[RMDB]
RNA sequence: GGGAACGACUCGAGUAGAGUCGAAAACCAAACUCUUCUUCGCCUCUAGAACUAGGGGCUGAGAUUUGGUUUCCUUGUUUUCCUGAUGCCUCCCAUGCCUAUUGUUCUCAGAUGCUCCUUCCUCUUCAAUCCCGGGCUGUUUCGACAGCCCGGGAUUAAAAGAAACAACAACAACAAC
Reactivity to 2A3 in 0.01 (KOAc 150mM, MgCl2 10mM, bicine 150mM(pH8.5), 24C), signal-to-noise 1, nucleotides 027 to 126: c000c000a010a030a060c140u150c130u230u020c030u120u030c070g000c000c000u010c010u010a130g050a300a300c190u000a030g010g000g000g020c030u000g000a000g010a000u000u000u030g000g000u010u020u070c030c050u000u020g060u130u020u020u040c030c000u020g100a070u060g020c040c000u100c000c000c020a060u010g000c000c010u040a140u060u070g020u120u000c020u000c040a030g010a070u100g020c010u040c020c000u030u040c000c010u000c000u000u090c050